[RMDB]
The record gives the reactivity of an RNA of 207 nucleotides to 2A3.
Values cover nucleotides 27 to 156.
The reactions ran in a buffer of 150 mM KOAc, 10 mM MgCl2 and 150 mM bicine (pH 8.5), at 24 C.
Source: RMDB library OK3TST, as collected in RNAgym.
For 2A3, 436 sequencing reads were counted.
RNA sequence: GGGAACGACUCGAGUAGAGUCGAAAAACACAUACACUUAACCAUGUGACCAUACCAUCUUAGGCAUUUGUCCAAGAUAAAAUAUAACAUGCAUCCACACAAAUGUUUAAAGAAGCUGUAUUUCUUGUAGAAACAACUGAAAUGUCCUUCAACAGGACCUCACCAGUGGAUUCGUCCACUGGUGAGGAAAAGAAACAACAACAACAAC
Reactivity to 2A3 in 0.01 (KOAc 150mM, MgCl2 10mM, bicine 150mM(pH8.5), 24C), signal-to-noise 1, nucleotides 027 to 156: a000c080a010c010a020u160a040c080a040c220u170u280a180a080c100c020a030u020g000u000g100a040c010c010a000u020a190c070c000a040u020c010u000u030a110g000g010c030a080u040u000u160g040u000c020c070a050a060g020a020u140a020a050a040a060u250a010u020a040a030c000a000u040g030c000a030u020c000c000a020c000a020c000a130a030a030u080g020u010u040u120a130a110a010g040a020a010g010c070u030g050u120a090u010u040u010c000u080u100g040u060a070g070a230a100a010c100a100a000c070u110g000a060a030a000u100g000u130c050c020u130u120c040a130a110c030a100g040g000a000